[RMDB]
Chemical mapping of a 207-nucleotide RNA with 2A3 and DMS. The reactions ran in a buffer of 150 mM KOAc, 10 mM MgCl2 and 150 mM bicine (pH 8.5), at 24 C. For DMS, 2,479 sequencing reads were counted. For 2A3, 1,265 sequencing reads were counted.
RNA sequence: GGGAACGACUCGAGUAGAGUCGAAAAGCACUAGAGGGCGUAACGGCUGGGUGUAACCCACCUCUAGGUGUGCUGAUUAGCGGGCUUGACUCCGUAACAAAUAGGCACUGGUGGUAAAAAGCAUCCCUGACCAUAUACAUCUUCGGAUGUAUAUGAAUCGUAGCAGAUGAUUCGUCAUCUGCUACGAAAAAGAAACAACAACAACAAC
Reactivity to 2A3 in 0.01 (KOAc 150mM, MgCl2 10mM, bicine 150mM(pH8.5), 24C), signal-to-noise 2, nucleotides 027 to 156: g000c000a000c070u030a010g020a050g030g030g020c060g080u130a100a020c050g130g030c120u100g000g060g010u110g030u150a160a180c000c030c000a030c000c000u020c000u000a020g000g090u020g030u010g000c000u000g000a130u040u110a050g020c010g050g010g080c100u150u130g030a140c050u000c040c020g010u010a000a020c020a030a100a030u130a060g000g000c030a010c050u080g090g000u030g060g040u110a060a060a040a010a000g020c010a020u000c000c000c020u020g030a050c020c020a000u000a000u010a000c000a000u000c010u020u010c140g030g010a000u000g000u000a000u000a000u000g000a010a030
Reactivity to DMS in 0.01 (KOAc 150mM, MgCl2 10mM, bicine 150mM(pH8.5), 24C), signal-to-noise 1, nucleotides 027 to 156: g040c030a020c020u000a040g000a050g010g010g040c080g010u010a210a100c040g010g020c050u010g000g030g000u000g040u000a070a200c040c030c040a070c050c000u000c030u000a020g000g020u000g020u000g050c020u000g020a220u000u010a130g000c000g020g000g050c050u000u040g000a120c150u010c040c000g050u000a100a110c100a030a050a100u030a100g010g000c040a070c010u000g030g000u000g000g030u000a010a040a030a100a180g010c060a110u000c000c000c040u010g050a210c120c010a020u000a020u000a010c020a000u010c010u000u000c300g070g000a010u010g010u000a010u000a000u010g020a070a100